An RNA of 170 nucleotides, treated with 2A3 and DMS and read out base by base. Values cover nucleotides 27 to 129.

RNA sequence: GGGAACGACUCGAGUAGAGUCGAAAAGACGAUGGUUACUUCCUUCCUUAUCCAGACCCUUCAAGAAUUUUGUCUGCCGGUUGCUUUGUAGAUGAUAUCGUUAAGACUGACGGUACACUCAUGGUAGUUAUCCCAGUGUUCGCACUGGGAAAAAGAAACAACAACAACAAC
Reactivity to 2A3 in 0.01 (KOAc 150mM, MgCl2 10mM, bicine 150mM(pH8.5), 24C), signal-to-noise 5, nucleotides 027 to 129: g120a010c050g060a060u040g030g000u070u050a060c000u060u070c010c000u010u040c000c010u050u130a060u060c010c010a050g060a110c010c000c040u070u120c070a050a020g090a120a090u130u080u030u100g050u000c000u010g040c000c030g100g020u120u100g060c030u050u020u150g020u080a040g020a180u030g010a070u040a040u030c070g020u060u040a140a070g180a210c130u050g000a010c020g000g000u000a000c000a000c000u060c010a050u060g050g000u000a060g020u050u110a010
Reactivity to DMS in 0.01 (KOAc 150mM, MgCl2 10mM, bicine 150mM(pH8.5), 24C), signal-to-noise 4, nucleotides 027 to 129: g000a120c040g030a140u020g000g000u030u040a060c090u020u010c070c060u000u030c000c030u000u000a060u000c050c060a020g000a120c030c010c010u000u000c090a090a060g000a090a100u020u020u000u000g050u000c060u000g050c050c050g030g020u030u030g010c040u000u000u000g010u000a000g020a080u030g000a140u010a000u010c030g040u030u030a000a140g000a130c180u000g020a050c060g000g000u000a010c030a040c040u000c040a070u000g000g010u020a000g000u030u040a130